[RMDB]
RNA sequence: GGGAACGACUCGAGUAGAGUCGAAAAAAGGUGAUGGAACAUGGCUGGUUUGCUUAGCGGGUUGGGCUGUAGGGUACACUAUGCUGGCCUGCCCACUCCAAGUUGAGAGUUGGGCCAUGGGAUUUGGCCCCUAAAGGUUAUUCGUAACCUUUAGGGGAAAAGAAACAACAACAACAAC
Reactivity to 2A3 in 0.01 (KOAc 150mM, MgCl2 10mM, bicine 150mM(pH8.5), 24C), signal-to-noise 9, nucleotides 027 to 126: a000a000g140g010u110g010a100u110g030g010a030a030c010a030u040g020g000c010u020g010g090u060u060u060g030c020u030u040a020g010c040g020g030g030u090u070g060g020g000c030u060g130u180a080g040g020g040u180a080c030a020c030u130a140u280g040c090u020g060g020c000c010u030g000c000c000c010a000c010u020c020c000a130a110g040u070u150g080a090g000a010g060u110u060g010g000g000c010c000a030u030g020g010g010a010u080u060u130g090g020
Reactivity to DMS in 0.01 (KOAc 150mM, MgCl2 10mM, bicine 150mM(pH8.5), 24C), signal-to-noise 9, nucleotides 027 to 126: a060a050g010g010u010g010a070u010g000g000a140a130c040a040u000g010g010c020u000g010g010u010u000u010g010c040u000u000a050g030c080g010g010g010u010u010g010g010g020c040u010g020u020a080g000g000g010u010a080c090a060c060u010a070u010g010c120u010g000g000c010c010u000g000c000c000c010a020c030u000c030c050a090a130g030u000u010g000a070g000a050g010u000u010g010g000g000c010c070a010u000g000g000g000a170u010u010u010g010g010

Structure probing data (2A3 and DMS) for a 177-nucleotide construct. High DMS reactivity at an A or C suggests that its Watson-Crick edge is free. For 2A3 the reverse transcriptase was SuperScript II with manganese. The RNA was probed in 150 mM KOAc, 10 mM MgCl2 and 150 mM bicine (pH 8.5) at 24 C.